RNA sequence: GGGAACGACUCGAGUAGAGUCGAAAAUAAGAGAGAUUGCCACAACAGCAAGCAACGCACUGUGAAAUCAGGAUUAAGGACUGGCAUCCAGUGGGAGCUCCAGCCGGGUUCAGGAAUAUACGCCAAAGUCCAGAGUGUGCUUCGGUGCAUUUUGGACAAAAGAAACAACAACAACAAC
Reactivity to DMS in 0.01 (KOAc 150mM, MgCl2 10mM, bicine 150mM(pH8.5), 24C), signal-to-noise 9, nucleotides 027 to 126: u030a080a090g010a090g010a060g010a060u010u010g010c030c020a060c090a070a080c130a080g000c060a090a090g000c080a070a120c090g000c030a070c020u010g000u020g000a050a060a060u010c030a040g000g000a110u010u020a090a090g020g010a080c030u010g000g000c250a080u000c030c020a060g030u010g000g010g000a110g000c050u000c030c040a090g010c030c030g000g010g000u010u010c050a050g000g000a050a060u030a070u020a060c080g000c010c030a050a060a090
Reactivity to 2A3 in 0.01 (KOAc 150mM, MgCl2 10mM, bicine 150mM(pH8.5), 24C), signal-to-noise 9, nucleotides 027 to 126: u130a030a020g070a000g010a000g020a070u030u100g030c010c010a060c030a140a040c020a040g050c020a010a060g030c010a020a050c040g010c030a030c020u020g020u030g090a020a020a030u070c010a010g030g020a040u090u080a060a030g060g020a020c010u010g020g010c010a030u010c000c010a010g020u040g010g040g000a020g010c000u000c010c000a010g010c000c000g000g000g000u040u040c020a010g000g020a030a030u080a010u030a080c030g000c010c000a040a050a010